[RMDB]
Chemical mapping of a 177-nucleotide RNA with DMS and 2A3. The reactions ran in a buffer of 150 mM KOAc, 10 mM MgCl2 and 150 mM bicine (pH 8.5), at 24 C. The data come from the RNA Mapping Database (RMDB), library RFM100.
RNA sequence: GGGAACGACUCGAGUAGAGUCGAAAACACUUGCACAUGGGUAAGCCGAUCCUAAGGGACGGGGUAACCCCGGCAGACAGCGCGAUCUCGCGUGUUGCCCGAAAGGGAAUCGGGUUAAGAUUUCCCGGGGAUAGAAAUUCUUCGGAAUUUCUAUCCCAAAAGAAACAACAACAACAAC
Reactivity to DMS in 0.01 (KOAc 150mM, MgCl2 10mM, bicine 150mM(pH8.5), 24C), signal-to-noise 3, nucleotides 027 to 126: c130a100c120u010u000g000c000a090c150a090u000g000g010g020u010a050a260g000c000c000g020a070u000c020c000u000a170a230g030g000g000a070c000g000g000g020g000u030a190a080c070c000c000c200g010g000c110a080g000a070c190a030g020c000g000c000g000a200u040c210u010c040g000c000g000u010g000u000u010g000c000c000c000g000a010a060a130g010g000g000a070a060u010c020g010g000g000u000u010a070a080g010a160u000u000u000c000c000c000g030
Reactivity to 2A3 in 0.01 (KOAc 150mM, MgCl2 10mM, bicine 150mM(pH8.5), 24C), signal-to-noise 4, nucleotides 027 to 126: c040a010c030u050u130g020c030a060c020a300u240g010g020g030u050a030a030g070c000c000g130a270u000c020c000u050a100a130g050g000g020a000c000g020g000g030g000u140a170a180c020c010c000c000g030g000c010a030g030a080c020a060g010c010g010c020g050a210u120c110u130c150g000c010g000u050g080u100u080g040c000c000c010g010a120a070a030g040g040g010a000a050u040c000g000g000g000u020u100a070a020g030a070u010u020u000c010c000c000g010